Annotation:
Chemical mapping of a 207-nucleotide RNA with 2A3 and DMS. Source: RMDB library OK3TST, as collected in RNAgym. The RNA was probed in 150 mM KOAc, 10 mM MgCl2 and 150 mM bicine (pH 8.5) at 24 C. For DMS, 8,762 sequencing reads were counted.
[RMDB]
RNA sequence: GGGAACGACUCGAGUAGAGUCGAAAAAACUGCAAAGUUUGUCUGACAGAUAUGUUAAAGCCGUAGGUCCUCUAAAGGUUGGCACAGGUGCUUACAUUAAAUGCAAAGCAUUUGAUGUUUUUAAUGUUGUAGGUCCACGCAAGGGUAAACAUGCUAAAUGUAAUAACAGGUUCGCCUGUUAUUACAUAAAAGAAACAACAACAACAAC
Reactivity to 2A3 in 0.01 (KOAc 150mM, MgCl2 10mM, bicine 150mM(pH8.5), 24C), signal-to-noise 2, nucleotides 027 to 156: a000a000c130u150g000c110a220a170a170g010u100u120u110g030u150c060u060g030a070c030a050g060a080u120a030u200g070u080u100a190a060a020g030c020c000g030u020a080g020g060u030c020c010u030c020u070a050a130a050g090g000u030u020g050g010c000a010c030a050g000g070u020g040c020u070u030a000c000a050u100u070a030a040a010u070g010c130a180a050a040g000c000a020u000u020u040g040a040u010g050u030u090u000u020u100a070a050u030g070u140u020g080u080a010g010g000u000c040c000a030c040g040c020a040a080g020g000g050u080a050a080a010c020a000u030g020c030u120a190a180
Reactivity to DMS in 0.01 (KOAc 150mM, MgCl2 10mM, bicine 150mM(pH8.5), 24C), signal-to-noise 3, nucleotides 027 to 156: a030a030c040u000g020c100a090a110a090g030u000u000u000g010u000c030u000g010a130c040a110g000a170u000a050u000g010u000u000a060a050a110g020c040c030g060u010a070g010g000u000c030c020u000c060u000a050a060a070g020g020u000u010g010g000c030a060c040a060g030g010u000g000c040u000u000a030c000a030u000u000a020a040a100u010g000c020a120a080a120g010c020a010u000u000u000g000a080u000g000u010u000u000u000u020a040a120u010g020u000u010g020u000a060g010g010u000c000c010a060c040g020c050a060a090g000g040g010u000a070a040a070c050a060u000g010c040u010a060a110